[RMDB]
Structure probing data (2A3 and DMS) for a 177-nucleotide construct. For 2A3, 4,015 sequencing reads were counted. In probing experiments dimethyl sulfate is read out at A N1 and C N3, which are open when not base-paired. High 2A3 reactivity points to a flexible backbone, as in loops and unpaired stretches.

RNA sequence: GGGAACGACUCGAGUAGAGUCGAAAAGAUAUGGAUCGAACAAGGGAGUUAAUGCUCGGAAACGAGCACUAACAUCGAUCUUGCUCGAUCCUAAGUCAAAACAAGUUAGGCUUCGGCCUAACUUGAACCUUGAAUGGUGGUUCGCCACCAUUCAAGGAAAAGAAACAACAACAACAAC
Reactivity to 2A3 in 0.01 (KOAc 150mM, MgCl2 10mM, bicine 150mM(pH8.5), 24C), signal-to-noise 2, nucleotides 027 to 126: g000a000u020a020u090g010g010a020u000c000g030a030a000c000a000a020g100g100g090a290g100u010u000a010a000u030g000c000u020c020g020g010a000a010a000c010g020a000g010c000a000c000u010a010a000c000a060u300c270g300a300u000c000u000u000g000c010u000c030g000a010u010c000c000u000a020a000g020u010c000a000a000a120a230c000a000a020g010u000u000a000g000g020c000u050u140c300g170g000c000c000u010a000a000c000u020u010g010a010a020
Reactivity to DMS in 0.01 (KOAc 150mM, MgCl2 10mM, bicine 150mM(pH8.5), 24C), signal-to-noise 1, nucleotides 027 to 126: g000a030u020a070u000g000g000a000u000c000g060a010a010c000a000a000g000g030g010a300g000u000u000a000a030u000g000c010u000c010g020g000a030a000a030c000g030a030g040c000a000c060u000a000a000c000a260u000c300g010a090u000c000u000u000g010c010u020c000g010a000u000c010c000u000a000a060g010u000c000a100a090a050a280c010a010a020g010u000u000a000g000g010c060u000u010c250g050g040c000c000u000a000a000c000u000u000g010a030a130

The RNA was probed in 150 mM KOAc, 10 mM MgCl2 and 150 mM bicine (pH 8.5) at 24 C.